An RNA of 177 nucleotides, treated with DMS and 2A3 and read out base by base. The 2A3 profile rests on 43,321 reads. It was measured as part of the RMDB library OK1LIB. The RNA was probed in 150 mM KOAc, 10 mM MgCl2 and 150 mM bicine (pH 8.5) at 24 C. For DMS, 21,589 sequencing reads were counted.

RNA sequence: GGGAACGACUCGAGUAGAGUCGAAAAUGCUUCGGUUACGUACAUGAUAAACAUGUAUCACUAGGUGUGUCCACCUAGUGCCUGUUCGCCAGUCUAUAGAACGGGCUGAACGCUCAAGCCAUUAGACACAUCCGUCGCGCUUCGGUGCGAUGGAUGUAAAAGAAACAACAACAACAAC
Reactivity to DMS in 0.01 (KOAc 150mM, MgCl2 10mM, bicine 150mM(pH8.5), 24C), signal-to-noise 8, nucleotides 027 to 126: u020g010c020u000u010c140g000g000u010u020a080c160g010u000a000c010a010u010g000a180u040a100a150a200c020a000u010g000u000a020u010c030a030c000u000a010g010g020u000g020u040g020u040c240c030a030c000c010u000a000g000u000g000c140c050u000g020u000u000c030g010c030c040a100g000u000c040u030a070u030a110g020a060a050c060g000g000g000c020u010g000a050a080c090g020c020u000c150a050a060g000c040c060a120u030u010a030g010a120c110
Reactivity to 2A3 in 0.01 (KOAc 150mM, MgCl2 10mM, bicine 150mM(pH8.5), 24C), signal-to-noise 9, nucleotides 027 to 126: u110g000c010u020u040c040g040g000u070u100a060c060g010u010a000c010a020u030g040a160u140a140a150a030c010a010u010g010u010a020u040c000a000c020u000a010g000g000u020g020u040g120u120c130c010a000c000c000u000a000g000u000g000c000c010u030g000u010u020c020g030c030c010a040g040u010c040u080a120u050a130g040a070a020c010g000g010g000c020u050g050a060a030c070g000c020u040c050a050a030g040c040c010a070u090u110a040g030a040c030